[RMDB]
This 177-nucleotide RNA was probed chemically with DMS.
Reactivities are rounded to 0.1 and cut off at 0 and 3.
Reactivities are given for positions 27 through 126.
The reactions ran in a buffer of 150 mM KOAc, 10 mM MgCl2 and 150 mM bicine (pH 8.5), at 24 C.
The DMS profile rests on 2,163 reads.

RNA sequence: GGGAACGACUCGAGUAGAGUCGAAAAGAUAUGGAGUCUUGCCAUCAUAGUUACUGUGGGAGCUCUGUUUCGGAAACGAAAUUGAGCGAAGAACACAGGUAACUAUGAUGGCAAGACUCCUAAGUCACUAUCUAGUCCUGUUCGCAGGACUAGAUAGAAAAGAAACAACAACAACAAC
Reactivity to DMS in 0.01 (KOAc 150mM, MgCl2 10mM, bicine 150mM(pH8.5), 24C), signal-to-noise 2, nucleotides 027 to 126: g000a080u000a300u000g000g010a040g000u000c000u000u000g000c000c000a000u000c000a010u010a020g010u010u000a040c010u000g030u020g000g030g010a130g000c010u000c000u010g030u000u000u000c000g010g000a120a110a290c020g020a010a000a000u000u010g010a010g000c010g000a070a110g000a140a220c000a010c000a010g010g010u010a000a030c000u000a010u000g000a000u010g020g000c000a000a010g000a010c000u000c000c010u000a000a040g020u000c050a300
It was measured as part of the RMDB library TTRINS.